[RMDB]
RNA sequence: GGGAACGACUCGAGUAGAGUCGAAAAGGGGUCUAAUUGUCAGCAUCCGAACUUCUUGGAUUUAUAGGCUGAAGCCUCCACGGCCUAUUGUCAGAAGGUAGAUGCUUGGAUUUAUUAGACGGAGGCACCCAAAGAUCUGGGGUUCGCCCCAGAUCAACCCUGUGGUACAGUUCGCUGUACCACAGGGAAAAGAAACAACAACAACAAC
Reactivity to 2A3 in 0.01 (KOAc 150mM, MgCl2 10mM, bicine 150mM(pH8.5), 24C), signal-to-noise 1, nucleotides 027 to 156: g060g020g020g010u030c020u030a030a040u060u020g030u060c030a020g010c020a000u000c030c040g120a250a190c030u050u100c010u160u240g180g000a040u130u300u100a000u060a010g000g000c000u030g090a050a030g020c000c030u020c040c020a010c020g010g000c000c000u000a010u020u000g050u070c090a010g030a140a010g090g000u050a080g040a010u000g000c000u020u090g090g000a000u000u300u190a010u090u070a010g010a020c000g000g020a010g000g000c020a040c000c010c000a050a130a010g010a000u000c000u000g000g010g000g020u070u010c200g240c000c000c000c000a000g010a000u000c000a010a010